[RMDB]
RNA sequence: GGGAACGACUCGAGUAGAGUCGAAAAGCAUUAUACGGUCAUCGUCGUGAUAAACCAGGUUAUGCACAAGCAAUUAAAGAUUUCGAUGAUCGCUUGCCAGAACUGUUUAGCAACUUAAAAGAAGACGGCCGUCAUGAAGGUUCGCCUUCAUGACGGCAAAAGAAACAACAACAACAAC
Reactivity to 2A3 in 0.01 (KOAc 150mM, MgCl2 10mM, bicine 150mM(pH8.5), 24C), signal-to-noise 2, nucleotides 027 to 126: g000c000a060u170u110a230u120a080c070g000g040u000c000a000u000c230g070u080c100g040u080g100a010u080a070a100a240c060c090a060g120g090u020u010a040u160g130c070a000c000a050a030g000c090a090a150u110u270a060a110a210g110a070u170u240u000c080g060a060u260g000a000u030c010g000c000u110u080g060c000c010a000g000a030a110c080u000g120u050u040u130a000g000c000a000a150c060u000u000a140a050a050a050g180a100a000g060a000c010g030